[RMDB]
RNA sequence: GGGAACGACUCGAGUAGAGUCGAAAAGUAUUGGCAUUCUAGGUUAGCAUGUAGGAGCGGAAGAGGGCGACUGUAUUGCGUAGCGAGAGGUGAAAGUUGACGACCUACGUAGGACAAACCGAAGCGAAAUCUUACCCUCCUUCGGGAGGGUAAGAUUAAAAGAAACAACAACAACAAC
Reactivity to DMS in 0.01 (KOAc 150mM, MgCl2 10mM, bicine 150mM(pH8.5), 24C), signal-to-noise 3, nucleotides 027 to 126: g000u010a090u010u020g000g000c070a030u000u010c060u000a050g010g020u010u010a080g020c080a050u010g000u040a050g040g000a110g000c100g040g000a120a060g000a120g010g000g000c040g000a090c060u000g000u030a060u040u010g000c070g030u000a090g030c040g000a080g000a090g000g040u000g030a070a110a170g010u020u000g000a060c070g000a110c290c010u040a060c050g000u000a050g000g010a070c080a040a090a060c000c040g030a070a070g000c130g000a050
Reactivity to 2A3 in 0.01 (KOAc 150mM, MgCl2 10mM, bicine 150mM(pH8.5), 24C), signal-to-noise 4, nucleotides 027 to 126: g080u050a110u100u090g030g000c030a040u060u040c000u050a040g080g060u080u040a030g000c030a040u030g020u080a040g020g090a060g000c030g030g030a040a010g010a010g020g000g000c020g020a030c040u020g050u090a060u130u090g020c030g010u000a000g030c020g030a040g000a020g120g020u030g040a170a080a050g060u060u110g060a050c010g040a010c000c000u010a000c010g070u080a050g000g030a040c040a040a090a030c030c000g020a050a000g060c040g020a060